Annotation: Structure probing data (2A3 and DMS) for a 170-nucleotide construct. The DMS profile rests on 40,202 reads. The 2A3 profile rests on 23,606 reads. It was measured as part of the RMDB library 15KLIB.
RNA sequence: GGGAACGACUCGAGUAGAGUCGAAAACCCGAGAGGGGAAGAGUGAGGCUUAUCCCGGGGAACUCGGCGAAUCGUCCCCGCAUGGCAGAGACCGAGCCCCCUUCGGAAAAGGACCGGAGGAGGGAGCAGAGUGAACACUUCGGUGUUCACAAAAGAAACAACAACAACAAC
Reactivity to 2A3 in 0.01 (KOAc 150mM, MgCl2 10mM, bicine 150mM(pH8.5), 24C), signal-to-noise 8, nucleotides 027 to 129: c000c000c000g020a030g000a010g000g020g000g000a030a020g040a010g070u130g020a030g040g010c000u060u110a090u120c010c010c010g020g000g000g000a060a040c020u010c050g030g000c020g060a040a070u080c040g040u030c020c010c010c000g020c060a080u100g040g000c050a020g040a020g050a190c010c020g000a020g030c010c000c000c010c000u020u030c030g000g000a020a070a020a080g090g040a050c020c020g010g000a020g030g010a100g010g000g000a020g010c030a010g100a020
Reactivity to DMS in 0.01 (KOAc 150mM, MgCl2 10mM, bicine 150mM(pH8.5), 24C), signal-to-noise 7, nucleotides 027 to 129: c000c000c030g020a080g020a060g070g010g040g020a020a040g000a030g000u000g000a010g020g010c120u000u000a090u060c060c040c070g050g000g030g030a090a090c060u020c000g000g000c000g010a080a070u030c100g010u040c020c000c020c080g020c130a020u040g030g050c050a040g000a130g000a130c000c030g020a070g000c040c020c010c000c020u000u010c070g030g000a110a100a120a100g010g010a110c040c030g050g000a050g010g000a000g040g000g000a020g030c060a090g030a170